[RMDB]
RNA sequence: GGGAACGACUCGAGUAGAGUCGAAAAAAAAGAUAUGGAGACGAACUUCGCAUCGAUCUAUAUGGAGGUGUAUGUCGGAAACGACAUACGCGAAGUAUAGGGAGCGAAUUCGUCUCCUAAGUCAAAACGUCUCUUCAUAGUUCGCUAUGAAGAGACGAAAAGAAACAACAACAACAAC
Reactivity to DMS in 0.01 (KOAc 150mM, MgCl2 10mM, bicine 150mM(pH8.5), 24C), signal-to-noise 1, nucleotides 027 to 126: a030a060a100a050g020a010u000a000u000g010g000a050g020a000c000g000a010a040c240u000u000c020g050c000a300u010c200g000a030u010c020u000a000u000a010u000g000g000a300g000g000u010g010u040a000u000g020u010c000g050g000a000a000a000c000g000a050c000a000u000a000c000g010c000g000a280a210g000u000a020u010a010g000g000g000a000g030c000g000a040a060u000u000c000g030u010c000u010c000c000u010a000a060g000u000c010a090a090a070a220
Reactivity to 2A3 in 0.01 (KOAc 150mM, MgCl2 10mM, bicine 150mM(pH8.5), 24C), signal-to-noise 1, nucleotides 027 to 126: a000a000a000a000g030a020u020a010u050g000g010a000g010a000c000g020a010a010c300u000u000c000g030c030a140u300c090g000a000u000c010u010a010u010a020u060g120g070a270g300g000u010g000u000a000u020g010u000c010g020g030a000a000a000c000g000a000c000a010u000a000c000g000c040g020a020a000g010u000a010u000a000g010g000g010a010g000c000g000a010a000u000u010c000g000u010c000u000c000c000u000a010a000g000u010c000a010a000a020a100